Record summary
An RNA of 177 nucleotides, treated with DMS and read out base by base.
[RMDB]
RNA sequence: GGGAACGACUCGAGUAGAGUCGAAAAGGGGGCUCACCCCAUGGCUAGAGUGACCCCUGCUCUGGGGCGCCCAUGGUGGGAGGCUGGGGGCGCUGGCCUUCAGAGACGUCCCUCAGGCCCAGGACAGUGCACCAUCUAGGUUCGCCUAGAUGGUGCAAAAAGAAACAACAACAACAAC
Reactivity to DMS in 0.01 (KOAc 150mM, MgCl2 10mM, bicine 150mM(pH8.5), 24C), signal-to-noise 1, nucleotides 027 to 126: g000g000g000g020g020c170u010c090a280c020c000c040c010a040u000g000g020c140u010a060g010a060g000u000g000a210c030c010c000c010u000g000c100u010c150u000g000g000g000g030c060g010c150c020c000a020u000g010g030u010g030g020g000a080g020g000c010u000g000g000g020g000g000c000g000c240u000g020g030c000c000u000u000c030a020g000a100g010a100c160g000u010c000c000c010u000c080a060g030g000c010c010c050a180g010g000a090c170a120g000